[RMDB]
RNA sequence: GGGAACGACUCGAGUAGAGUCGAAAAAGGAGUAAUCCUAAACAGGGUUUUCACCCUUCCUUUAGUUUCCUUCCUCUCCUGGAGAGGUCUUCUGCCCUAGCCCGGUCUUCGAAGCUUCCUUUGGCUACAGAAUUUAGUAGUUCGCUACUAAAUUCUGAAAAGAAACAACAACAACAAC
Reactivity to 2A3 in 0.01 (KOAc 150mM, MgCl2 10mM, bicine 150mM(pH8.5), 24C), signal-to-noise 2, nucleotides 027 to 126: a000g040g000a020g010u070a050a030u030c010c000u030a010a000a060c300a040g060g000g020u060u130u300u300c150a080c000c000c000u000u040c010c000u000u000u050a010g000u010u030u010c000c000u000u110c010c000u020c010u030c020c100u160g010g090a060g010a010g020g000u020c000u100u000c020u030g040c010c000c000u020a040g010c000c000c000g080g070u030c040u080u050c070g040a050a010g020c010u070u030c010c000u100u110u130g040g010c000u050a030
Reactivity to DMS in 0.01 (KOAc 150mM, MgCl2 10mM, bicine 150mM(pH8.5), 24C), signal-to-noise 3, nucleotides 027 to 126: a030g010g010a030g000u010a040a060u010c150c000u000a010a040a060c210a030g010g010g010u000u000u010u010c220a100c000c000c000u000u000c040c020u000u000u000a040g000u000u000u000c000c020u000u000c010c010u000c050u000c010c080u010g010g020a050g000a060g000g000u000c020u000u000c050u000g020c020c020c030u000a090g020c020c040c120g020g020u000c070u020u000c050g000a110a140g010c080u010u010c020c010u000u010u000g020g000c070u010a170
Notes: Chemical mapping of a 177-nucleotide RNA with 2A3 and DMS. For 2A3, 2,602 sequencing reads were counted. Reactivities are given for positions 27 through 126. For 2A3 the reverse transcriptase was SuperScript II with manganese. The data come from the RNA Mapping Database (RMDB), library VIROID. The reactions ran in a buffer of 150 mM KOAc, 10 mM MgCl2 and 150 mM bicine (pH 8.5), at 24 C.